[RMDB]
RNA sequence: GGGAACGACUCGAGUAGAGUCGAAAAACGGAUGGUACGCCAUCCGACCAUUGGGUAGAAGCGUUCAAUCAGCACCGUGACGGUGCAGAUGGGAAAUUGCCCAUGAUACGCACCAUACGUGGUGAGAAAAAGCCAUCGGUGUUCGCACCGAUGGCAACAUGGUUACGCAGUUCGCUGCGUAACCAUGAAAAGAAACAACAACAACAAC
Reactivity to 2A3 in 0.01 (KOAc 150mM, MgCl2 10mM, bicine 150mM(pH8.5), 24C), signal-to-noise 3, nucleotides 027 to 156: a000c000g000g000a000u000g010g010u020a010c280g040c040c000a000u010c000c000g010a000c000c000a080u080u100g020g030g000u020a020g040a190a010g060c040g050u060u040c030a030a040u010c010a040g020c000a010c000c010g120u150g190a120c220g000g030u000g010c000a020g010a010u030g010g030g000a020a040a120u090u070g040c000c000c010a000u020g050a020u040a050c080g040c020a010c010c020a040u080a060c250g040u030g020g000u030g020a070g090a020a090a030a010a010g000c000c000a020u010c010g000g010u010g020u040u100c200g000c040a000c010c000g010a000u000g000g000c000a000a000
Reactivity to DMS in 0.01 (KOAc 150mM, MgCl2 10mM, bicine 150mM(pH8.5), 24C), signal-to-noise 1, nucleotides 027 to 156: a190c050g040g010a060u000g000g120u000a110c300g010c040c010a010u000c030c010g000a030c030c010a230u010u000g010g010g040u000a090g010a150a080g010c130g030u020u000c020a090a030u000c010a120g000c000a010c030c000g050u010g030a130c130g060g050u000g040c020a000g000a020u000g000g000g020a040a140a110u000u000g020c020c140c000a030u000g020a190u010a080c060g030c040a010c000c000a060u000a020c110g080u000g020g000u000g000a130g000a070a090a100a020a160g030c000c000a030u010c020g010g010u000g050u000u020c210g000c020a300c020c010g030a010u000g000g010c000a000a010